[RMDB]
RNA sequence: GGGAACGACUCGAGUAGAGUCGAAAAUGUCGAUGAGUUUAUUCAGGCCGUUAAGCAGCGCUGGCCAGAUAUCCUGCUACAGUUCGAAGAUUUCGCGCAGAAAAACGCAAUGCCGCUGUUGACGCGCGUCGCGAUUUACUUUCGAGUAAAUCGCGACAAAAGAAACAACAACAACAAC
Reactivity to DMS in 0.01 (KOAc 150mM, MgCl2 10mM, bicine 150mM(pH8.5), 24C), signal-to-noise 2, nucleotides 027 to 126: u000g020u000c040g000a080u020g020a100g030u000u040u020a040u000u000c070a050g040g030c010c000g000u010u000a070a090g030c020a050g030c060g000c040u030g000g020c000c050a030g000a130u050a080u020c150c030u000g000c030u030a190c300a040g000u010u000c040g000a110a070g040a170u000u000u000c050g000c050g030c030a080g010a080a050a000a160a050c110g000c010a060a050u010g020c120c000g020c020u000g000u010u000g000a170c110g000c030g030c040
Reactivity to 2A3 in 0.01 (KOAc 150mM, MgCl2 10mM, bicine 150mM(pH8.5), 24C), signal-to-noise 3, nucleotides 027 to 126: u150g030u100c090g040a060u110g060a120g080u060u140u130a140u140u070c100a050g140g000c000c010g010u030u040a200a040g060c030a010g000c010g000c030u070g050g000c000c000a000g050a030u110a030u070c020c030u030g040c010u030a070c040a140g020u010u110c020g120a120a020g020a180u100u130u080c030g000c010g000c020a020g110a020a070a000a010a000c020g030c040a030a020u120g000c000c020g000c080u020g030u030u030g020a020c020g080c000g010c020